[RMDB]
RNA sequence: GGGAACGACUCGAGUAGAGUCGAAAAGAUAUGGAUCCACUACGGGAGCAGAUGACGUUCGGAAACGAACGGCCCUGCUUUGAUCGUAGGUGGAUCCUAAGUCAAAACCCCGAGUUCGCUCGGGGAAGGAAUGAAUGAGGUUCGCCUCAUUCAUUCCAAAAGAAACAACAACAACAAC
Reactivity to DMS in 0.01 (KOAc 150mM, MgCl2 10mM, bicine 150mM(pH8.5), 24C), signal-to-noise 2, nucleotides 027 to 126: g000a050u000a300u000g010g000a000u000c000c010a010c000u000a000c020g030g000g020a000g000c000a010g020a040u000g000a030c000g000u010u000c010g040g000a170a110a240c000g010a000a000c020g020g000c060c110c000u000g000c000u010u000u010g010a120u030c010g000u000a000g030g000u010g000g010a000u000c000c000u020a010a070g000u010c030a160a080a130a190c010c000c030c000g010a000g010u000u040c300g040c010u000c010g000g000g000g010a020a010
Reactivity to 2A3 in 0.01 (KOAc 150mM, MgCl2 10mM, bicine 150mM(pH8.5), 24C), signal-to-noise 2, nucleotides 027 to 126: g050a010u060a030u240g000g000a000u000c000c000a020c030u010a010c010g050g000g040a000g000c010a000g070a170u120g030a050c000g010u010u000c030g020g060a080a060a040c030g010a020a000c000g020g010c000c000c000u010g000c000u110u070u060g150a130u090c010g000u020a100g140g110u040g000g000a010u000c000c000u000a010a000g020u030c010a020a060a120a300c020c000c000c000g000a020g020u070u160c260g040c110u010c010g000g010g010g020a020a080
Structure probing data (DMS and 2A3) for a 177-nucleotide construct. It was measured as part of the RMDB library TTRDES. The 2A3 profile rests on 4,027 reads. Reactivities are given for positions 27 through 126. DMS adducts were read by reverse transcription with MarathonRT.